[RMDB]
Structure probing data (2A3 and DMS) for a 177-nucleotide construct.
DMS adducts were read by reverse transcription with MarathonRT.
For 2A3 the reverse transcriptase was SuperScript II with manganese.
High 2A3 reactivity points to a flexible backbone, as in loops and unpaired stretches.
Conditions: 150 mM KOAc, 10 mM MgCl2 and 150 mM bicine (pH 8.5), 24 C.
RNA sequence: GGGAACGACUCGAGUAGAGUCGAAAAUUAACACCAUCAAAUUUCUUCAACUCAGCAAGUGAAGAUACGAUUACUAAAAUUAAAUUAAAUGCAUUGAGAGAACAACGUCGCAUUUUACGUGAGUUGAUAAGUGUUACACAUUCGUGUGUAACACUUAAAAAGAAACAACAACAACAAC
Reactivity to 2A3 in 0.01 (KOAc 150mM, MgCl2 10mM, bicine 150mM(pH8.5), 24C), signal-to-noise 6, nucleotides 027 to 126: u110u040a060a060c060a100c050c010a060u150c110a050a070a140u040u030u030c010u030u040c020a030a030c000u000c010a060g070c070a300a100g030u050g090a040a040g080a130u050a020c040g050a030u120u140a070c130u130a120a110a120a150u180u160a090a030a060u140u110a090a060a030u150g060c080a080u110u200g090a070g020a000g020a200a030c020a070a030c070g050u040c010g000c040a030u000u090u010u050a050c050g030u030g020a020g000u000u020g010a000
Reactivity to DMS in 0.01 (KOAc 150mM, MgCl2 10mM, bicine 150mM(pH8.5), 24C), signal-to-noise 5, nucleotides 027 to 126: u020u070a130a090c110a160c010c020a120u050c160a080a100a120u010u010u020c040u000u010c000a030a010c020u000c020a060g010c120a080a090g020u010g010a020a020g000a020u000a050c020g020a030u010u020a080c070u010a010a070a050a030u030u030a130a080a150u020u050a040a100a070u030g000c130a070u010u010g000a090g010a120g010a080a070c140a080a060c200g000u000c020g010c020a030u010u010u010u000a040c060g010u000g000a020g010u000u010g020a100